Source: RMDB library OK2TST, as collected in RNAgym. The record gives the reactivity of an RNA of 177 nucleotides to 2A3 and DMS. For 2A3 the reverse transcriptase was SuperScript II with manganese. The reactions ran in a buffer of 150 mM KOAc, 10 mM MgCl2 and 150 mM bicine (pH 8.5), at 24 C. For 2A3, 1,062 sequencing reads were counted.
[RMDB]
RNA sequence: GGGAACGACUCGAGUAGAGUCGAAAAGAGCAGUUUGACUGACAGCCCAGAGGGCUGCCCUCUGAUUCCACCUGAGGCCCUGCUUUUCCUGGCUGCAGGGGUUCCAGGGCCAGGCCAUUUCCGCUGGACAAAUCCUAGAGUUCGCUCUAGGAUUUGUAAAAGAAACAACAACAACAAC
Reactivity to 2A3 in 0.01 (KOAc 150mM, MgCl2 10mM, bicine 150mM(pH8.5), 24C), signal-to-noise 1, nucleotides 027 to 126: g040a020g020c030a050g000u170u260u220g170a150c040u020g040a070c000a040g000c000c010c080a020g130a090g100g050g010c080u090g020c070c030c000u000c020u020g050a150u150u000c070c000a080c030c120u030g080a070g070g010c010c000c000u020g010c000u090u090u160u030c020c010u000g080g000c070u120g010c050a050g000g040g040g040u080u110c010c000a000g050g000g000c000c000a020g020g000c030c000a050u060u070u030c030c080g000c090u040g030g000
Reactivity to DMS in 0.01 (KOAc 150mM, MgCl2 10mM, bicine 150mM(pH8.5), 24C), signal-to-noise 3, nucleotides 027 to 126: g000a070g000c030a030g020u000u000u010g010a100c080u010g000a130c050a080g000c030c050c010a130g020a300g000g020g020c050u000g020c060c020c030u000c010u000g000a160u000u010c050c040a130c070c040u000g000a150g000g000c030c030c030u000g000c060u010u010u000u000c010c010u010g000g000c130u000g020c030a040g010g000g010g020u010u000c090c040a070g010g020g000c040c020a060g000g000c110c040a080u000u010u000c020c040g030c120u000g000g000